RNA sequence: GGGAACGACUCGAGUAGAGUCGAAAACAUCUUUGAUAAUAGCUUUGCAAGACUUGCAUUAUGUUUUAAAACUUGUGUUACCAGAAACAACCCUUGAACUUACUGAGGAUACACGUCGUAGGCGACGUGCUGUAGAUGAGUUUUCAGACACAAUAUCGAAUUUAAGGGGUUUCGACCCCUUAAAUUCAAAAGAAACAACAACAACAAC
Reactivity to DMS in 0.01 (KOAc 150mM, MgCl2 10mM, bicine 150mM(pH8.5), 24C), signal-to-noise 1, nucleotides 027 to 156: c060a130u000c100u000u000u030g030a120u010a180a130u010a090g030c070u000u010u000g010c070a060a140g010a080c110u000u000g000c080a020u000u000a010u000g010u000u000u010u000a070a040a050a050c030u000u010g040u000g010u010u000a070c050c050a140g010a170a060a030c130a110a110c000c040c030u010u000g010a060a130c090u000u000a060c090u010g010a120g000g030a170u000a060c000a030c000g010u000c000g000u000a240g010g050c000g050a010c000g030u000g060c010u000g030u000a120g000a140u000g000a070g010u010u000u000u000c070a100g030a040c030a060c010a040a050u000a090u000c070
Reactivity to 2A3 in 0.01 (KOAc 150mM, MgCl2 10mM, bicine 150mM(pH8.5), 24C), signal-to-noise 3, nucleotides 027 to 156: c010a050u040c060u070u070u100g070a070u080a300a070u070a090g040c060u070u090u140g020c080a030a080g060a300c060u060u100g010c020a030u050u070a070u150g050u010u030u030u080a010a080a000a040c040u050u010g020u010g040u070u030a030c050c010a010g040a020a060a010c020a060a040c030c000c030u020u060g030a090a040c050u140u080a040c030u270g030a050g020g030a000u040a120c010a000c000g000u000c010g020u030a170g130g250c070g010a020c010g000u010g020c010u010g000u010a020g020a100u030g010a010g010u020u040u030u040c010a000g040a010c020a020c030a100a020u130a120u300c080